[RMDB]
RNA sequence: GGGAACGACUCGAGUAGAGUCGAAAAGACUACCACAUUUUCUCCUAAUAAUAGAUUUUAGUGGCUAUGCUUAUGGGAUAGAUUAAACUUGCCAUGAUCUGAAGAGGGAGGGUUUUUUCAUGUCCUCAAAGUUCGACGUAUUCGUACGUCGAACUUUAAAAGAAACAACAACAACAAC
Reactivity to 2A3 in 0.01 (KOAc 150mM, MgCl2 10mM, bicine 150mM(pH8.5), 24C), signal-to-noise 3, nucleotides 027 to 126: g030a050c020u110a110c000c050a040c030a050u020u050u090u000c040u010c000c010u120a190a120u210a130a040u050a040g000a000u010u030u050u080a070g000u010g000g000c020u090a090u190g020c030u100u030a110u180g100g050g000a040u100a110g110a040u200u120a040a000a030c020u020u100g030c000c000a000u050g020a030u040c000u030g140a130a030g060a080g080g010g000a020g050g000g000u010u000u000u000u010u070c080a050u060g040u000c000c000u050c000
Reactivity to DMS in 0.01 (KOAc 150mM, MgCl2 10mM, bicine 150mM(pH8.5), 24C), signal-to-noise 2, nucleotides 027 to 126: g000a060c020u010a130c060c060a100c170a120u000u000u020u030c000u000c010c030u010a060a160u020a070a140u080a010g000a030u000u050u040u050a020g070u000g000g000c070u030a000u000g040c030u020u000a020u000g000g010g050a280u000a060g010a070u010u030a090a020a030c040u000u000g010c050c020a010u000g000a000u000c000u000g000a100a060g000a240g010g010g000a050g000g000g000u000u000u000u000u000u010c080a110u010g010u000c030c000u000c110
The record gives the reactivity of an RNA of 177 nucleotides to 2A3 and DMS. Reactivities are rounded to 0.1 and cut off at 0 and 3.